[RMDB]
The record gives the reactivity of an RNA of 177 nucleotides to 2A3. For 2A3, 630 sequencing reads were counted. The reactions ran in a buffer of 150 mM KOAc, 10 mM MgCl2 and 150 mM bicine (pH 8.5), at 24 C.
RNA sequence: GGGAACGACUCGAGUAGAGUCGAAAAACAACGAUCUCUUAAUAAGGAUGGCACUGUUGCCCGCUCCUAUUGGGGGGAUGAAUUAUCUGAAUAUGAGCAGGCUGUUUGUCAGAAACAUCGGUGAUCCGUGAGCACAUCAGUUCGCUGAUGUGCUCACAAAAGAAACAACAACAACAAC
Reactivity to 2A3 in 0.01 (KOAc 150mM, MgCl2 10mM, bicine 150mM(pH8.5), 24C), signal-to-noise 2, nucleotides 027 to 126: a040c060a010a010c050g020a060u000c030u030c000u100u060a170a080u140a230a060g000g030a010u060g070g000c010a030c180u170g130u220u060g000c000c000c050g000c010u000c030c070u000a000u050u070g110g010g010g000g030g130a030u050g070a050a190u270u050a030u080c030u060g020a010a020u000a040u120g020a070g040c050a050g030g030c010u000g070u030u050u000g140u160c010a000g140a070a040a000c030a060u050c000g010g000u000g010a030u000c010c100